[RMDB]
RNA sequence: GGGAACGACUCGAGUAGAGUCGAAAAGUGGUCGAGUGCGAGGCCGGUGUCGACCGCUGGGCGAACGCCUUCUCGGAGCUUAGUAGGAAUCCGUACAGUGACGCACCGGAGCUGCUUAGAAAUGUAAACUUCGACGAGUACCUAGAACGUGCGGAUGCAUCAACGUAUGUUUCGACAUACGUUGAUGAAAAGAAACAACAACAACAAC
Reactivity to 2A3 in 0.01 (KOAc 150mM, MgCl2 10mM, bicine 150mM(pH8.5), 24C), signal-to-noise 4, nucleotides 027 to 156: g190u130g020g030u040c020g020a050g010u090g020c040g030a050g030g090c010c070g020g000u080g040u170c030g020a120c040c040g000c010u030g000g010g000c010g020a120a030c100g060c000c000u060u000c030u030c030g130g040a110g030c120u200u140a020g040u030a000g060g030a040a040u040c040c010g000u030a030c010a020g010u010g070a010c010g000c020a000c000c000g030g000a030g020c030u060g010c010u070u090a060g100a060a140a050u160g030u230a110a080a080c020u070u050c030g020a030c030g010a060g020u030a030c000c030u040a120g050a200a040c050g030u050g030c080g080g010a050u110g020
Reactivity to DMS in 0.01 (KOAc 150mM, MgCl2 10mM, bicine 150mM(pH8.5), 24C), signal-to-noise 2, nucleotides 027 to 156: g000u000g030g020u010c020g010a120g000u020g020c050g040a190g020g020c000c020g030g010u000g030u000c020g000a120c030c020g070c020u000g000g030g070c000g000a060a020c100g030c030c010u020u000c030u000c070g020g000a280g020c090u000u000a100g030u000a060g020g000a100a050u000c020c020g020u000a010c000a080g030u000g000a090c060g020c000a060c010c000g010g010a140g010c030u010g000c020u000u000a130g030a070a120a090u040g020u000a130a070a050c020u010u000c010g020a110c030g010a170g030u000a120c040c040u020a010g000a040a090c130g030u010g000c020g000g010a160u000g030
Conditions: 150 mM KOAc, 10 mM MgCl2 and 150 mM bicine (pH 8.5), 24 C.
The record gives the reactivity of an RNA of 207 nucleotides to 2A3 and DMS.
Source: RMDB library OK3TST, as collected in RNAgym.